[RMDB]
RNA sequence: GGGAACGACUCGAGUAGAGUCGAAAAGACGGAUUCUUCGGAAUCCGUCAAAGUGACGGUGAAAAAUGGCCAAUGCGCCAGCUACCACCGACACUGGGCGCAAAACUGGAGUGUUCGCACUCCAGAAGGUAGUUAUCACCUUCGGGUGAUAACUACCAAAAGAAACAACAACAACAAC
Reactivity to 2A3 in 0.01 (KOAc 150mM, MgCl2 10mM, bicine 150mM(pH8.5), 24C), signal-to-noise 1, nucleotides 027 to 126: g000a000c000g020g000a000u020u010c000u070u050c220g080g010a020a000u030c000c020g000u000c000a000a000a000g000u000g000a020c020g000g070u000g000a060a020a030a020a070u050g020g000c000c050a160a300u220g000c160g000c050c000a010g060c000u040a050c020c020a000c000c000g010a000c000a000c010u040g020g020g060c090g030c140a100a070a050a070c000u000g000g000a010g000u000g020u070u140c210g030c060a000c000u000c010c000a000g000a000a000
Reactivity to DMS in 0.01 (KOAc 150mM, MgCl2 10mM, bicine 150mM(pH8.5), 24C), signal-to-noise 1, nucleotides 027 to 126: g010a010c000g020g000a020u000u000c000u000u040c230g020g000a000a000u000c000c000g010u000c000a000a010a010g000u000g010a150c030g000g000u000g000a030a040a120a230a090u000g010g000c010c010a160a150u010g020c100g020c000c000a010g010c100u000a160c140c000a010c010c010g010a020c020a010c000u010g000g010g000c130g000c100a070a110a070a140c030u030g000g000a020g010u000g010u000u020c230g000c000a010c000u000c000c000a000g000a050a020